[RMDB]
RNA sequence: GGGAACGACUCGAGUAGAGUCGAAAAGUGAGAUGUUGGGUUAAGUCCCGCUACGAGCGCAACCCUAAUCUCAUGUUGCCAGCACGUAAUAGUGGGGACUCGUGAGAGACUGCCGGAGUCAAAUCGGAAUAUUGUUAAAAUUCGUUUUAACAAUAUUAAAAGAAACAACAACAACAAC
Reactivity to DMS in 0.01 (KOAc 150mM, MgCl2 10mM, bicine 150mM(pH8.5), 24C), signal-to-noise 9, nucleotides 027 to 126: g010u010g000a030g010a020u000g010u020u000g000g010g010u000u010a100a140g010u030c040c100c030g020c090u010a070c120g000a090g020c040g000c140a050a020c000c020c010u010a100a060u010c010u000c010a020u010g010u010u010g000c020c030a100g010c050a050c050g000u010a080a080u030a080g020u010g010g010g000g000a080c030u010c040g000u020g010a120g000a100g000a080c040u010g010c020c020g010g000a080g010u000c070a040a080a110u010c050g000g000
Reactivity to 2A3 in 0.01 (KOAc 150mM, MgCl2 10mM, bicine 150mM(pH8.5), 24C), signal-to-noise 9, nucleotides 027 to 126: g040u030g010a030g010a040u070g080u260u160g040g020g010u060u100a100a070g120u120c040c030c000g000c010u080a090c160g090a050g050c030g000c050a020a040c000c010c000u030a060a070u010c010u000c010a010u060g070u070u070g060c010c010a040g080c020a020c040g070u090a070a060u060a230g040u070g020g040g010g030a050c010u010c050g030u060g040a080g000a010g020a070c030u050g020c020c010g030g010a040g040u100c090a060a040a090u090c020g020g000